[RMDB]
RNA sequence: GGGAACGACUCGAGUAGAGUCGAAAAAAGUGUGGUCCACCUCAAGUAAAGGCAGGGUGGAGAAUGAAUCUCUAUUUCCUGGAGGUGGACAUGUCUACAGAUACUAAGUAGAAUAUCUUUAGGGAAGCCAGACUAUCAGAUUCGUCUGAUAGUCUGGAAAAGAAACAACAACAACAAC
Reactivity to DMS in 0.01 (KOAc 150mM, MgCl2 10mM, bicine 150mM(pH8.5), 24C), signal-to-noise 3, nucleotides 027 to 126: a040a070g010u010g030u010g000g000u000c010c010a010c000c000u000c030a150a140g020u010a070a070a090g030g000c030a020g000g010g010u000g010g000a000g000a020a170u010g020a220a180u010c000u010c010u000a030u010u010u010c040c000u000g000g020a000g000g020u000g000g000a000c010a010u000g000u000c000u000a030c020a120g000a180u020a120c150u010a090a130g010u000a030g000a040a130u010a040u000c020u000u000u010a120g010g000g030a090a120g000
Reactivity to 2A3 in 0.01 (KOAc 150mM, MgCl2 10mM, bicine 150mM(pH8.5), 24C), signal-to-noise 3, nucleotides 027 to 126: a000a000g180u170g010u080g040g040u000c000c000a020c000c000u010c030a090a260g090u180a220a090a050g050g020c020a000g020g010g010u030g030g000a010g030a020a090u240g060a090a170u020c000u000c000u010a040u060u160u090c010c000u010g100g000a000g000g000u030g000g000a000c000a000u030g000u000c010u000a010c010a020g070a070u070a160c070u090a200a060g040u040a010g080a090a020u080a020u070c030u010u050u040a000g000g060g020a020a030g040
Chemical mapping of a 177-nucleotide RNA with DMS and 2A3. The DMS profile rests on 2,435 reads. The RNA was probed in 150 mM KOAc, 10 mM MgCl2 and 150 mM bicine (pH 8.5) at 24 C. DMS adducts were read by reverse transcription with MarathonRT. 2A3 adducts were read by reverse transcription with SuperScript II with manganese. The data come from the RNA Mapping Database (RMDB), library OK2TST.